[RMDB]
RNA sequence: GGGAACGACUCGAGUAGAGUCGAAAACGUCGGUCCGGAUGGGUAUCUGUGAACGGAUCGACGAAAGGUGUAGUGCAUCACAGAUACCCAUCGCACUGCACCAGUGGAGAUGCGAAAGCAUUUCCACGCAGGUACUUCGCUUCGGCGAAGUACCUGCAAAAGAAACAACAACAACAAC
Reactivity to 2A3 in 0.01 (KOAc 150mM, MgCl2 10mM, bicine 150mM(pH8.5), 24C), signal-to-noise 1, nucleotides 027 to 126: c000g010u000c000g000g030u000c000c000g010g000a040u010g000g020g030u060a040u040c000u000g060u050g070a100a050c020g000g000a010u000c010g000a010c020g000a060a020a010g000g030u000g010u020a010g000u010g020c010a050u010c050a030c000a050g020a000u030a000c000c000c010a020u040c040g000c000a010c030u010g000c010a010c010c010a000g000u000g000g000a000g000a000u020g020c000g070a070a000a000g010c010a000u000u000u000c000c000a000c000
Background:
Structure probing data (2A3) for a 177-nucleotide construct. The RNA was probed in 150 mM KOAc, 10 mM MgCl2 and 150 mM bicine (pH 8.5) at 24 C. For 2A3, 1,513 sequencing reads were counted. It was measured as part of the RMDB library OK1LIB. For 2A3 the reverse transcriptase was SuperScript II with manganese.